An RNA of 207 nucleotides, treated with DMS and 2A3 and read out base by base.
Conditions: 150 mM KOAc, 10 mM MgCl2 and 150 mM bicine (pH 8.5), 24 C.
The data come from the RNA Mapping Database (RMDB), library OK3TST.

RNA sequence: GGGAACGACUCGAGUAGAGUCGAAAAAAGCUGGAGUUACAGGCAUGCACCAUCACGCCCUGCCUAUCUUAAUUUUCAUAAUGGGUAUGACAUUUACUGAUAGUAAUAUCAUUAUACAUGCCCCAUACAUGCUAACAUCUGCUUCCACAUGGAAGCAAUAUAUACCGACUUUCGAGUCGGUAUAUAUAAAAGAAACAACAACAACAAC
Reactivity to DMS in 0.01 (KOAc 150mM, MgCl2 10mM, bicine 150mM(pH8.5), 24C), signal-to-noise 3, nucleotides 027 to 156: a070a060g000c020u000g000g000a150g010u010u000a090c070a090g000g010c000a050u000g030c040a140c070c070a130u010c040a100c060g000c020c020c010u010g020c020c050u010a050u010c060u010u010a070a100u000u000u010u000c050a090u010a070a070u000g000g010g020u000a030u000g010a060c030a060u000u000u000a060c090u010g040a070u000a080g000u020a080a120u000a010u000c010a030u000u000a100u000a080c030a020u000g020c000c000c030c090a060u000a080c060a070u000g010c040u000a080a130c070a140u000c100u000g010c000u000u000c000c000a110c140a120u000g030g010a020a010g030c000a020
Reactivity to 2A3 in 0.01 (KOAc 150mM, MgCl2 10mM, bicine 150mM(pH8.5), 24C), signal-to-noise 6, nucleotides 027 to 156: a000a000g070c030u040g030g020a080g030u100u090a070c070a050g000g000c020a020u090g030c020a060c040c010a050u090c030a020c070g040c020c000c010u030g010c010c010u040a090u070c050u060u190a240a230u130u130u120u110c040a090u110a210a070u130g010g010g000u030a010u010g060a090c060a140u070u100u130a060c050u040g030a030u010a020g050u110a110a040u010a060u060c000a000u020u100a040u020a050c010a000u010g010c010c000c000c020a020u100a130c040a020u120g050c030u050a060a040c020a170u070c040u120g000c000u000u000c010c010a180c060a230u270g000g000a000a000g000c010a000